Notes:
The record gives the reactivity of an RNA of 177 nucleotides to DMS and 2A3. The DMS profile rests on 24,126 reads. It was measured as part of the RMDB library OK1LIB. The reactions ran in a buffer of 150 mM KOAc, 10 mM MgCl2 and 150 mM bicine (pH 8.5), at 24 C. 2A3 adducts were read by reverse transcription with SuperScript II with manganese.
[RMDB]
RNA sequence: GGGAACGACUCGAGUAGAGUCGAAAAGAGCGUUGGCGUAUAUCGCACUUCUGGCCAUGUCCUCGUUGCCGGUACCGAUGGCUUAUUAGCGAAAUAUCGGUUGUCGGAAUGCUAAUAUAUACGGAAAGGGAUUAUCUUACUUCGGUAGGAUAAUCCCAAAAGAAACAACAACAACAAC
Reactivity to DMS in 0.01 (KOAc 150mM, MgCl2 10mM, bicine 150mM(pH8.5), 24C), signal-to-noise 7, nucleotides 027 to 126: g010a050g000c080g010u000u000g010g020c020g010u010a060u000a050u000c110g020c030a080c070u000u010c020u000g010g000c030c070a080u010g000u010c020c020u010c050g020u010u010g010c020c030g010g000u010a040c040c020g000a040u010g010g010c070u000u040a070u020u030a070g010c030g020a090a090a140u040a030u010c030g010g000u010u010g030u000c000g010g000a070a050u020g010c070u010a060a060u020a030u020a040u020a060c060g010g010a110a090a160
Reactivity to 2A3 in 0.01 (KOAc 150mM, MgCl2 10mM, bicine 150mM(pH8.5), 24C), signal-to-noise 9, nucleotides 027 to 126: g080a010g010c060g010u020u040g050g010c010g010u040a030u010a020u140c050g010c030a080c080u060u020c020u040g030g000c010c020a080u100g060u030c010c010u050c030g060u020u080g100c020c020g020g010u010a030c010c010g020a020u020g060g000c010u040u080a160u080u200a120g050c060g080a140a060a040u190a030u030c020g010g000u010u070g030u030c000g010g010a020a020u050g000c000u020a110a050u080a070u020a020u030a120c060g060g040a080a080a090